[RMDB]
The record gives the reactivity of an RNA of 207 nucleotides to 2A3 and DMS. Source: RMDB library M2RFPK, as collected in RNAgym. Conditions: 150 mM KOAc, 10 mM MgCl2 and 150 mM bicine (pH 8.5), 24 C. For 2A3, 5,580 sequencing reads were counted.
RNA sequence: GGGAACGACUCGAGUAGAGUCGAAAAAUACUUCUCAGGAUGGCGCGUUGCAGUCCAACAAGAUCCAUGGACUGUACAGAAUUUUCCUAUACCUCGAGUCGGGUUUGGAAUCUAAGGUUGACUCGCUAAAACUUUACGUGGUUCGCCACGUAAAGAAGUUAACAGUAUACUUCGGUAUACUGUUAACAAAAGAAACAACAACAACAAC
Reactivity to 2A3 in 0.01 (KOAc 150mM, MgCl2 10mM, bicine 150mM(pH8.5), 24C), signal-to-noise 6, nucleotides 027 to 156: a000u110a040c050u050u040c040u010c030a020g100g020a100u070g050g050c030g010c060g120u080u080g010c010a010g000u000c010c000a040a030c060a100a100g110a180u070c090c030a040u030g000g000a010c000u000g020u030a010c000a010g150a150a080u070u040u010u000c010c000u040a040u080a090c000c020u020c040g010a000g020u020c020g000g010g000u030u030u080g020g020a050a030u010c040u090a110a090g100g020u090u110g030a040c000u010c030g000c020u070a070a060a050a090c000u000u000u000a000c000g000u000g000g050u020u030c110g030c050c000a000c000g000u000a000a000a000g000a010a000
Reactivity to DMS in 0.01 (KOAc 150mM, MgCl2 10mM, bicine 150mM(pH8.5), 24C), signal-to-noise 2, nucleotides 027 to 156: a100u000a040c080u000u000c020u000c030a140g010g000a110u000g020g030c050g030c090g040u010u010g000c000a010g020u000c020c010a040a160c060a070a150g000a110u020c040c050a300u000g020g010a020c020u000g000u030a060c050a120g010a110a080u000u000u000u000c010c030u010a130u000a060c100c010u000c030g020a020g020u000c000g000g000g020u000u010u010g010g020a090a100u000c040u000a100a110g010g020u000u000g020a070c040u000c000g000c050u010a040a060a100a190c000u000u000u000a000c000g010u000g000g000u000u010c300g000c000c000a010c000g000u010a000a000a010g000a020a090
As a SHAPE reagent, 2A3 marks flexible, mostly unpaired nucleotides at the ribose 2'-OH.